[RMDB]
RNA sequence: GGGAACGACUCGAGUAGAGUCGAAAAUGAGGAAAAUGGCCGCCGCGCCAACCGCACCGGAGCGCCGAGGUCGGCGACGAUGCGCGACGGCAGCAAGCUGACCAGGUACGAGUAGCGUGACAGCGCGACGCAUACGCUCGUUCGCGAGCGUAUGCGUAAAAGAAACAACAACAACAAC
Reactivity to 2A3 in 0.01 (KOAc 150mM, MgCl2 10mM, bicine 150mM(pH8.5), 24C), signal-to-noise 1, nucleotides 027 to 126: u100g000a100g040g040a110a030a050a130u120g100g000c070c010g000c040c020g000c010g000c000c010a000a020c000c010g130c020a010c010c040g190g010a160g090c050g020c010c020g020a110g170g100u060c030g060g000c000g030a100c090g080a050u110g000c010g010c040g170a110c000g060g000c020a000g010c010a100a000g010c000u000g020a050c040c000a050g040g040u110a000c050g010a170g040u080a020g030c020g050u070g030a060c060a050g050c000g040c010g000
Reactivity to DMS in 0.01 (KOAc 150mM, MgCl2 10mM, bicine 150mM(pH8.5), 24C), signal-to-noise 2, nucleotides 027 to 126: u010g010a150g000g000a020a050a110a190u010g010g020c010c010g020c080c040g040c030g040c040c070a070a110c190c010g000c080a030c030c010g010g000a180g000c060g040c040c030g000a170g010g010u000c010g010g010c010g000a110c170g000a080u000g000c010g010c040g020a140c160g000g000c010a030g020c130a090a110g020c010u000g010a020c040c000a080g000g030u000a040c070g000a090g000u000a080g000c020g000u000g000a150c210a050g010c020g010c010g010
Record summary: The record gives the reactivity of an RNA of 177 nucleotides to 2A3 and DMS. The DMS profile rests on 1,198 reads. The reactions ran in a buffer of 150 mM KOAc, 10 mM MgCl2 and 150 mM bicine (pH 8.5), at 24 C. Reactivities are given for positions 27 through 126. Values are in units of 0.01, from 0 to 300, in steps of 10.